[RMDB]
RNA sequence: GGGAACGACUCGAGUAGAGUCGAAAAAAUGCCGUACGCACAGGUGGUCGCAAACGUCAAACCCUUCCGCAUGAAGCACUUGUUUGCGCCGCUGCUAUCGUUGUUGUGCACGAUGCGGUACAAACACUCAUAUCGCACGAUUCGUCGUGCGAUAUGAAAAAGAAACAACAACAACAAC
Reactivity to DMS in 0.01 (KOAc 150mM, MgCl2 10mM, bicine 150mM(pH8.5), 24C), signal-to-noise 1, nucleotides 027 to 126: a040a040u050g020c010c070g030u000a060c060g010c010a160c140a130g000g000u030g000g000u030c100g010c020a000a070a000c030g010u030c250a030a160a160c100c110c060u000u000c010c180g000c220a000u080g030a030a040g070c150a030c190u050u020g000u000u000u000g000c000g000c000c000g040c050u040g100c100u100a070u050c090g000u000u000g030u000u000g000u000g000c010a040c090g030a070u020g010c030g000g000u030a030c210a020a070a230c190a020c270
Reactivity to 2A3 in 0.01 (KOAc 150mM, MgCl2 10mM, bicine 150mM(pH8.5), 24C), signal-to-noise 2, nucleotides 027 to 126: a000a020u170g000c010c010g000u030a010c030g000c020a000c000a090g070g000u050g050g000u280c050g070c040a000a010a000c070g030u230c110a150a130a290c010c000c000u060u000c050c020g190c140a040u300g030a000a000g010c050a020c100u240u150g070u130u000u020g020c000g000c020c000g020c060u110g070c000u090a060u210c060g000u030u080g040u070u000g040u070g030c010a000c000g000a030u090g000c000g010g010u080a000c060a050a100a000c030a010c120